[RMDB]
RNA sequence: GGGAACGACUCGAGUAGAGUCGAAAAGAAAGGGACCCCUGCCAUGGGACGCAGCCAGUCGAUCCCAGGCAUGUUUUUGCAUGCCAGACUGACCCCUCCUGCGGGCAGGAGGGGUGGUCCCGAAAGAAAUUAUGCAGGUAUUCGUACCUGCAUAAUUAAAAGAAACAACAACAACAAC
Reactivity to DMS in 0.01 (KOAc 150mM, MgCl2 10mM, bicine 150mM(pH8.5), 24C), signal-to-noise 6, nucleotides 027 to 126: g000a070a120a170g000g010g000a030c010c010c300c010u000g000c000c060a200u010g010g020g010a130c200g000c020a020g020c080c010a020g020u000c000g010a070u000c000c000c010a150g010g000c000a010u000g010u000u010u010u010u010g000c000a000u000g000c000c000a060g010a020c000u010g000a160c000c000c000c000u010c010c000u000g000c070g020g010g020c020a020g000g010a020g020g000g010g010u000g000g010u000c000c010c000g010a050a090a080g010a140
Reactivity to 2A3 in 0.01 (KOAc 150mM, MgCl2 10mM, bicine 150mM(pH8.5), 24C), signal-to-noise 2, nucleotides 027 to 126: g030a020a040a000g000g000g000a000c000c000c000c010u000g000c010c030a190u230g130g080g060a040c050g000c000a000g020c030c020a000g000u010c010g030a100u090c000c010c000a000g000g010c000a000u010g080u020u240u040u110u300g000c000a000u000g000c000c010a020g000a010c010u000g000a000c000c010c000c000u020c000c010u060g040c140g120g200g110c030a000g000g000a010g000g000g010g000u000g000g000u000c000c000c000g000a030a020a010g010a000